[RMDB]
RNA sequence: GGGAACGACUCGAGUAGAGUCGAAAAUCUCUCCAGCCUACCAAGUUGGACUUGGUGGGGAGACCCAAUUGAGCGGACGUUUCGGCCUGCCAUGGCCUCAUCAGUGAGACGGCGUUUCAGUCAGUCUGACAUAGAGUAUCUUCGGAUACUCUAUGUCAAAAGAAACAACAACAACAAC
Reactivity to 2A3 in 0.01 (KOAc 150mM, MgCl2 10mM, bicine 150mM(pH8.5), 24C), signal-to-noise 3, nucleotides 027 to 126: u020c000u010c000u000c020c010a160g040c030c030u060a010c010c010a100a000g110u110u150g280g060a100c020u030u030g000g000u000g000g000g000g000a020g010a010c040c000c040a020a090u070u060g020a020g010c040g030g080a150c050g060u040u000u090c040g030g010c000c000u030g210c090c060a100u110g030g000c010c000u010c010a110u020c010a040g160u110g110a020g000a000c010g000g010c010g010u010u170u050c030a040g070u030c010a010g080u020c020u050
Reactivity to DMS in 0.01 (KOAc 150mM, MgCl2 10mM, bicine 150mM(pH8.5), 24C), signal-to-noise 3, nucleotides 027 to 126: u000c030u020c000u010c030c060a100g030c090c080u020a190c020c020a020a050g000u000u010g000g030a300c030u000u000g000g020u000g020g000g000g000a030g000a080c010c040c030a170a060u000u000g000a050g000c000g000g010a090c030g010u000u010u000c040g010g010c010c000u000g000c120c150a070u010g010g010c030c020u000c100a110u000c110a070g000u000g010a060g000a020c030g000g000c000g010u000u000u000c030a050g000u000c110a100g000u010c120u000
The data come from the RNA Mapping Database (RMDB), library VIROID. The record gives the reactivity of an RNA of 177 nucleotides to 2A3 and DMS. 2A3 adducts were read by reverse transcription with SuperScript II with manganese. Reactivities are rounded to 0.1 and cut off at 0 and 3. The reactions ran in a buffer of 150 mM KOAc, 10 mM MgCl2 and 150 mM bicine (pH 8.5), at 24 C.